RNA sequence: GGGAACGACUCGAGUAGAGUCGAAAAGCACUCGCAGUUUAAUAACCUGCGCUGAGCCCUUCUACCCUAGCUUGCCUGUGUCCUAGGGAAUCGGAAGGUCAUCCUUCACAGGAUCGUGUGGAAGUCCUGCUCGGGGCGGAAGCAUUAAAACCAAUCGGCUUCAAAUAUUGUUCGCAAUAUUUGAAGCAAAAGAAACAACAACAACAAC
Reactivity to DMS in 0.01 (KOAc 150mM, MgCl2 10mM, bicine 150mM(pH8.5), 24C), signal-to-noise 1, nucleotides 027 to 156: g030c060a060c010u010c010g000c000a080g010u000u000u000a100a140u010a150a200c300c000u000g010c020g020c050u000g010a100g020c000c010c000u000u000c000u000a130c000c000c000u000a020g020c020u020u000g060c080c040u000g040u010g020u000c050c010u000a040g030g000g010a050a060u010c110g000g020a110a050g010g010u010c060a070u010c030c000u010u000c100a150c070a040g010g030a060u000c060g030u000g020u050g010g000a300a210g010u010c020c020u010g000c220u000c120g010g000g010g030c030g000g000a300a150g000c040a050u010u000a060a020a070a100c030c060a040a270u000c100g000
Reactivity to 2A3 in 0.01 (KOAc 150mM, MgCl2 10mM, bicine 150mM(pH8.5), 24C), signal-to-noise 4, nucleotides 027 to 156: g010c000a010c040u030c000g000c000a000g010u000u080u130a180a120u140a080a060c010c000u010g010c010g000c150u010g010a020g010c010c000c000u000u000c020u030a080c000c000c000u000a010g000c010u020u030g010c000c000u020g000u010g020u040c000c000u000a000g010g010g090a010a030u220c170g040g000a010a000g020g020u030c040a100u040c000c000u100u080c000a000c000a020g030g000a030u020c040g000u010g010u010g000g010a010a010g010u000c000c010u050g130c160u120c190g020g000g000g000c000g000g000a000a000g000c000a000u020u050a020a040a050a060c110c070a050a090u220c100g110